[RMDB]
RNA sequence: GGGAACGACUCGAGUAGAGUCGAAAAGUCGCGACAACGGCAGGCUGGGCAACCGGCUGGUGCCGAACGUCGCUCGACACGGGGGUGGCCCGGCCACCCUUUGCGCACCUUGGCACCGACCAUGAGACCUGCCUGCUUAGUUCGCUAAGCAGGCAGGAAAAGAAACAACAACAACAAC
Reactivity to DMS in 0.01 (KOAc 150mM, MgCl2 10mM, bicine 150mM(pH8.5), 24C), signal-to-noise 1, nucleotides 027 to 126: g010u010c000g020c000g000a010c010a100a300c050g030g000c000a170g000g140c000u000g070g010g000c300a050a130c030c000g010g090c090u000g000g000u020g000c000c000g010a000a130c300g000u000c020g000c020u000c000g000a030c060a070c120g000g000g000g000g000u000g020g000c000c110c000g040g030c050c000a000c000c000c000u000u000u000g040c050g000c100a050c070c060u000u000g000g000c010a000c040c000g000a060c030c060a090u000g000a130g000a280
Reactivity to 2A3 in 0.01 (KOAc 150mM, MgCl2 10mM, bicine 150mM(pH8.5), 24C), signal-to-noise 1, nucleotides 027 to 126: g020u010c010g000c000g000a040c000a050a070c010g000g000c000a000g000g010c000u010g070g000g000c030a100a130c000c020g010g000c030u060g120g100u150g000c000c000g010a000a000c100g030u010c000g000c000u020c020g050a030c030a080c110g000g000g010g000g040u060g020g000c050c300c060g080g000c000c000a000c030c060c000u010u030u000g000c050g000c010a000c000c000u090u010g000g020c000a030c090c060g030a030c000c000a100u130g000a030g030a090

This 177-nucleotide RNA was probed chemically with DMS and 2A3. The 2A3 profile rests on 854 reads. It was measured as part of the RMDB library RFM100. The RNA was probed in 150 mM KOAc, 10 mM MgCl2 and 150 mM bicine (pH 8.5) at 24 C.